[RMDB]
RNA sequence: GGGAACGACUCGAGUAGAGUCGAAAAUAAAAGGACAACGAAAUGCGCCUCUGCAACCUCCAGCUGGUGUUGUCUGGGAACCUGAUCAAAACUACCGAGUUUGAUCAGGCGAAUGCAGAGAAAAAAAGUAAUCUACGACUUUCGAGUCGUAGAUUACAAAAGAAACAACAACAACAAC
Reactivity to DMS in 0.01 (KOAc 150mM, MgCl2 10mM, bicine 150mM(pH8.5), 24C), signal-to-noise 1, nucleotides 027 to 126: u000a050a120a080a090g000g020a040c030a020a020c010g090a080a090a140u000g020c220g010c140c000u000c000u010g010c000a060a130c090c050u000c010c000a030g050c020u000g060g070u000g000u030u000g020u000c020u010g010g000g010a110a060c000c010u010g000a010u020c020a000a020a020a020c040u000a230c230c140g040a100g040u000u020u000g000a040u030c000a000g000g040c010g010a050a030u000g000c030a020g000a020g040a000a000a010a040a050a010a100